[RMDB]
RNA sequence: GGGAACGACUCGAGUAGAGUCGAAAAUGAGAAUACUUUUAGUACAAGCGAGUACACGCAGUAUACUGCCACUUGUGUGAGAAUACUUUUAGUACAAGCGAGUACACGCAGUAUACUGCCACUUGUGCUGGGCCAAGAGGUUCGCCUCUUGGCCCAGAAAAGAAACAACAACAACAAC
Reactivity to 2A3 in 0.01 (KOAc 150mM, MgCl2 10mM, bicine 150mM(pH8.5), 24C), signal-to-noise 1, nucleotides 027 to 126: u300g000a000g140a000a030u250a020c000u000u000u120u300a080g030u080a020c020a020a020g010c060g080a060g060u120a120c090a060c160g000c000a000g000u000a000u000a020c000u000g000c090c000a000c000u050u050g060u040g050u010g140a050g020a040a030u090a030c010u040u130u100u300a070g090u090a010c000a000a080g010c010g060a030g000u110a050c010a010c010g040c000a000g000u060a000u000a000c000u000g010c030c000a000c000u000u000g000u010g000

The record gives the reactivity of an RNA of 177 nucleotides to 2A3. The reactions ran in a buffer of 150 mM KOAc, 10 mM MgCl2 and 150 mM bicine (pH 8.5), at 24 C. Reactivities are given for positions 27 through 126. 2A3 adducts were read by reverse transcription with SuperScript II with manganese. It was measured as part of the RMDB library OK1LIB.